RNA sequence: GGGAACGACUCGAGUAGAGUCGAAAAGAUCGGAAACAGCAGCAGGUGAGUCCGCCUUAUGUGAAGGAUCGGCUGAAACACGAGGAAAUACUGAGCCAACGCAAGAGGGUAGCCGAACAGUAGCAACAAAACGCUUACGUGUUCGCACGUAAGCGAACUCAAAUGUAGAGUUCGCUCUACAUUUGAGAAAAGAAACAACAACAACAAC
Reactivity to DMS in 0.01 (KOAc 150mM, MgCl2 10mM, bicine 150mM(pH8.5), 24C), signal-to-noise 2, nucleotides 027 to 156: g010a110u010c040g030g040a080a050a090c040a080g010c030a080g060c080a070g020g060u000g020a080g030u010c040c010g040c020c020u000u010a070u000g000u010g010a120a120g010g030a090u010c040g020g000c010u000g010a170a100a010c050a040c020g010a080g020g000a040a070a080u000a120c030u010g010a150g020c050c010a060a090c060g010c030a060a050g020a060g030g000g050u010a070g020c030c040g000a050a040c050a090g000u010a050g030c040a070a110c100a020a040a100a120c030g030c000u000u000a000c030g030u000g010u000u010c300g040c000a000c000g040u000a000a030g020c000g020a010a020
Reactivity to 2A3 in 0.01 (KOAc 150mM, MgCl2 10mM, bicine 150mM(pH8.5), 24C), signal-to-noise 4, nucleotides 027 to 156: g060a050u090c050g020g050a060a060a040c040a040g020c020a010g000c000a010g030g010u040g070a080g050u050c040c020g000c030c000u130u100a160u110g100u060g110a060a040g030g020a040u080c050g010g010c020u050g020a080a040a000c060a010c070g060a050g000g110a050a100a010u120a080c030u040g010a010g040c030c010a040a020c060g030c050a060a040g020a050g020g000g040u040a000g000c020c000g020a010a000c010a030g070u090a020g080c050a010a040c010a050a070a010a020c000g000c000u000u000a000c010g000u000g000u020u100c130g010c070a000c010g000u000a000a000g000c000g000a000a000